An RNA of 177 nucleotides, treated with 2A3 and DMS and read out base by base. Reactivities are given for positions 27 through 126. The DMS profile rests on 2,230 reads. DMS adducts were read by reverse transcription with MarathonRT. For 2A3, 5,746 sequencing reads were counted.
[RMDB]
RNA sequence: GGGAACGACUCGAGUAGAGUCGAAAAGAUAUGGAUCCGUCAUGGGAGCUCCGUGGUCGGAAACGACCACCGAGCGAGGAUCAUGUACGGAUCCUAAGUCAAAUCGAUACGUCUUCGGACGUAUCGAGUGGUCAAGGAAGUUCGCUUCCUUGACCACAAAAGAAACAACAACAACAAC
Reactivity to 2A3 in 0.01 (KOAc 150mM, MgCl2 10mM, bicine 150mM(pH8.5), 24C), signal-to-noise 2, nucleotides 027 to 126: g010a010u030a010u140g020g020a000u000c010c000g010u010c010a010u010g040g000g130a220g020c010u000c020c010g000u010g020g010u010c000g020g030a030a040a020c010g000a000c020c010a010c010c010g000a000g000c010g020a090g030g000a110u070c020a010u000g100u090a000c000g000g030a000u000c000c010u000a020a000g000u010c040a060a020a210u080c000g000a020u010a020c010g010u020c020u040u050c300g200g030a000c000g000u000a000u000c000g000a010
Reactivity to DMS in 0.01 (KOAc 150mM, MgCl2 10mM, bicine 150mM(pH8.5), 24C), signal-to-noise 2, nucleotides 027 to 126: g010a030u000a300u000g000g010a010u010c000c000g010u000c000a010u000g000g000g020a110g010c000u000c000c270g030u000g010g000u000c000g010g000a070a050a170c020g000a020c000c010a010c000c180g020a020g000c020g000a030g020g030a070u000c010a000u000g000u020a020c030g010g000a000u000c000c000u020a000a060g000u000c030a150a140a300u000c000g000a010u000a000c000g000u000c000u000u020c260g020g000a000c000g010u000a000u000c000g010a010